[RMDB]
RNA sequence: GGGAACGACUCGAGUAGAGUCGAAAAGAAUAUAAGAGCGCAGUAACUGUGAGAGCAAACUGCGCCCGGACUGUAGGAUCCGGUGGCACAGCAACGCUCACUCACAACACGCUGUGCCACAUGAAGACGAUAGUACCGUCUUCGGACGGUACUAUCGAAAAGAAACAACAACAACAAC
Reactivity to DMS in 0.01 (KOAc 150mM, MgCl2 10mM, bicine 150mM(pH8.5), 24C), signal-to-noise 3, nucleotides 027 to 126: g000a100a130u050a020u030a070a100g010a050g010c000g010c000a000g010u000a090a100c080u010g000u010g010a160g000a140g020c020a030a100a040c010u000g010c020g020c000c000c010g020g020a060c050u000g010u010a130g010g010a250u010c020c000g020g000u000g030g020c000a000c000a000g000c000a120a060c250g000c060u000c030a030c080u030c290a120c260a100a110c290a070c170g010c010u000g000u000g000c000c000a000c030a040u020g000a060a100g000a160
Reactivity to 2A3 in 0.01 (KOAc 150mM, MgCl2 10mM, bicine 150mM(pH8.5), 24C), signal-to-noise 6, nucleotides 027 to 126: g030a070a040u230a020u080a070a050g020a000g010c000g000c000a000g020u050a100a100c040u070g000u030g040a060g010a010g070c030a060a140a000c000u000g000c000g000c000c000c000g020g000a010c020u130g100u180a060g090g060a090u000c010c010g010g000u000g010g000c000a000c000a010g010c020a060a100c100g010c030u080c030a050c020u140c010a130c040a060a150c080a020c140g000c000u000g000u000g000c010c000a000c010a030u160g050a060a030g090a020